Chemical mapping of a 207-nucleotide RNA with 2A3 and DMS. For DMS, 4,733 sequencing reads were counted. It was measured as part of the RMDB library OK3TST. DMS adducts were read by reverse transcription with MarathonRT.

RNA sequence: GGGAACGACUCGAGUAGAGUCGAAAAAGGGACACUGGUCACCUGAGCUCACCCAGGAACCACAGUGGAAGGAAGACUGUGCUAGGCAUAGAACUGGAAGACAGAGUCAUAUCAAAGUAUGAAAUUAGGAGGGCUUAACUGAUAUUGGCACAAAGAAAGCUAAAUAUCGAUUCGUCGAUAUUUAGCUAAAAGAAACAACAACAACAAC
Reactivity to 2A3 in 0.01 (KOAc 150mM, MgCl2 10mM, bicine 150mM(pH8.5), 24C), signal-to-noise 5, nucleotides 027 to 156: a000g040g010g000a020c030a010c080u060g020g030u070c070a110c150c010u020g000a020g030c060u060c040a090c020c050c000a000g040g020a020a020c030c010a010c030a060g040u070g050g050a090a040g080g020a040a030g020a020c030u040g010u030g050c050u060a030g040g000c030a080u030a050g030a040a020c030u030g020g020a020a010g050a030c060a050g030a000g030u010c020a010u020a020u050c050a080a030a020g040u020a020u050g050a050a060a080u120u070a080g040g000a010g000g000g020c000u060u060a060a020c040u040g030a010u040a060u170u090g010g000c030a010c020a040a060a020g130a050a090
Reactivity to DMS in 0.01 (KOAc 150mM, MgCl2 10mM, bicine 150mM(pH8.5), 24C), signal-to-noise 3, nucleotides 027 to 156: a120g000g010g020a110c010a070c040u000g020g030u000c020a110c020c000u000g000a100g020c080u010c140a120c040c020c000a020g020g010a100a100c010c000a040c040a050g000u000g010g030a140a110g010g000a130a060g020a060c020u010g020u010g010c020u000a060g050g050c040a150u000a060g000a040a120c030u000g010g000a060a030g000a250c110a060g000a080g020u000c030a060u020a040u000c020a040a040a090g000u000a020u000g020a040a040a100u010u010a050g050g020a080g010g000g020c020u000u020a050a160c060u000g000a080u000a120u010u000g000g010c040a100c040a040a040a100g000a070a100